[RMDB]
RNA sequence: GGGAACGACUCGAGUAGAGUCGAAAAAUAGAGCGGAGAUAUGACUGACGAAAUGAAGGCUACAAAGGAAAAUUCCAAAAUGAUGCUGUCAGUCCCAUUUCGGACGAACAUCUGAACGCACGUGCAAGGUGACUAGUAUCUUCGGAUACUAGUCACCAAAAGAAACAACAACAACAAC
Reactivity to 2A3 in 0.01 (KOAc 150mM, MgCl2 10mM, bicine 150mM(pH8.5), 24C), signal-to-noise 3, nucleotides 027 to 126: a050u120a010g110a070g010c020g110g090a050g000a040u050a020u170g050a080c040u020g020a000c030g020a110a000a030u170g000a150a010g000g010c000u020a030c080a050a050a020g060g040a040a160a150a160u270u010c050c010a000a060a080a200u200g040a060u180g070c090u080g060u130c060a030g050u050c000c000c070a030u000u000u070c000g040g000a050c040g010a100a000c000a060u040c050u050g060a030a000c010g000c030a050c060g020u020g010c100a050a140
Reactivity to DMS in 0.01 (KOAc 150mM, MgCl2 10mM, bicine 150mM(pH8.5), 24C), signal-to-noise 1, nucleotides 027 to 126: a170u000a120g020a050g060c040g000g000a020g010a060u000a100u010g050a210c160u010g010a300c030g030a010a040a000u010g010a080a260g000g000c020u000a100c070a060a050a100g000g000a000a050a100a100u010u040c090c140a000a030a010a110u040g000a120u000g010c070u020g000u030c090a000g000u020c010c040c020a000u000u030u020c040g000g000a160c150g010a090a050c050a000u000c010u000g000a000a180c100g000c010a040c160g000u000g010c300a050a050
Conditions: 150 mM KOAc, 10 mM MgCl2 and 150 mM bicine (pH 8.5), 24 C. An RNA of 177 nucleotides, treated with 2A3 and DMS and read out base by base. DMS adducts were read by reverse transcription with MarathonRT. Values cover nucleotides 27 to 126. Source: RMDB library OK1LIB, as collected in RNAgym.